[RMDB]
RNA sequence: GGGAACGACUCGAGUAGAGUCGAAAAGGACGCAGGCCAACGAGGCAUCGGCGUAUCUGAGCGCUUCCUUCUUGUUCGUGAGGAACCUCUUUUAGGUACUCGUAUCCUUUGCGAUGAAAAUGGUGAUGCACUGUAUAAGGAAGUCGAUCGAGGAUUGGUUGUGUUCAAUAUUCGUAUUGAACACAACAAAAGAAACAACAACAACAAC
Reactivity to 2A3 in 0.01 (KOAc 150mM, MgCl2 10mM, bicine 150mM(pH8.5), 24C), signal-to-noise 8, nucleotides 027 to 156: g030g000a010c030g000c090a000g010g010c010c010a090a060c140g050a070g030g000c020a130u160c100g040g000c010g000u030a090u070c110u110g050a020g020c010g000c010u020u010c000c000u030u060c040u070u170g090u110u080c060g050u070g030a000g000g020a040a020c030c010u040c000u070u090u050u160a060g020g000u080a110c010u010c050g030u050a140u080c010c010u040u050u080g050c030g030a050u080g090a050a070a040a040u130g030g020u050g030a060u080g030c040a020c050u060g050u080a070u040a150a070g060g000a020a020g050u090c030g030a050u040c030g020a040g040g040a080u080u100g060
Reactivity to DMS in 0.01 (KOAc 150mM, MgCl2 10mM, bicine 150mM(pH8.5), 24C), signal-to-noise 4, nucleotides 027 to 156: g020g010a070c030g030c030a140g000g020c030c010a110a140c170g010a150g020g010c030a080u000c060g040g010c030g050u000a040u010c070u010g010a110g020c050g010c030u000u000c010c010u000u000c070u010u000g010u000u010c100g020u000g020a040g000g000a170a060c010c010u000c050u010u000u000u010a060g030g010u000a040c010u000c040g030u000a140u010c010c020u000u000u010g010c010g010a060u000g000a060a050a080a140u010g030g030u000g020a170u010g010c050a080c040u010g030u000a100u000a080a100g010g000a070a100g030u000c020g000a090u010c030g020a090g010g010a160u000u000g020